[RMDB]
Chemical mapping of a 170-nucleotide RNA with 2A3 and DMS.
For DMS the reverse transcriptase was MarathonRT.
For 2A3 the reverse transcriptase was SuperScript II with manganese.
For 2A3, 4,114 sequencing reads were counted.
RNA sequence: GGGAACGACUCGAGUAGAGUCGAAAAAUCGAUCCACUUUCCGAGUGCCUCUUCUCUCCCCCUCCGGGUUCUCCUCGCAUCGGACUGGCUCAUUCUCGGAGAGGGCGGACGGUCCUGAGAACUCUUACAGCAUCGCGCUUCGGCGCGAUGAAAAGAAACAACAACAACAAC
Reactivity to 2A3 in 0.01 (KOAc 150mM, MgCl2 10mM, bicine 150mM(pH8.5), 24C), signal-to-noise 2, nucleotides 027 to 129: a010u090c050g050a090u010c000c000a080c010u040u070u010c010c000g010a000g010u060g030c020c000u000c000u060u050c000u000c000u000c010c000c000c020c030u030c000c000g070g000g000u090u020c020u020c000c000u020c020g000c020a080u030c000g000g010a010c050u000g000g020c000u000c030a120u170u010c010u000c000g030g000a020g000a030g010g010g050c020g020g000a000c000g000g020u010c000c060u000g010a020g010a020a040c000u010c010u100u060a060c090a030g030
Reactivity to DMS in 0.01 (KOAc 150mM, MgCl2 10mM, bicine 150mM(pH8.5), 24C), signal-to-noise 3, nucleotides 027 to 129: a090u000c120g030a130u010c040c040a140c090u030u080u000c010c040g000a070g020u080g000c040c000u030c010u040u000c010u020c030u040c060c010c010c020c020u010c050c020g000g000g000u010u050c020u000c040c020u030c140g000c080a100u000c100g010g020a140c050u060g000g030c070u060c080a110u060u000c060u000c040g030g050a060g010a050g050g020g020c180g040g020a000c000g010g020u000c060c000u000g070a180g050a100a090c100u020c030u120u000a060c120a130g030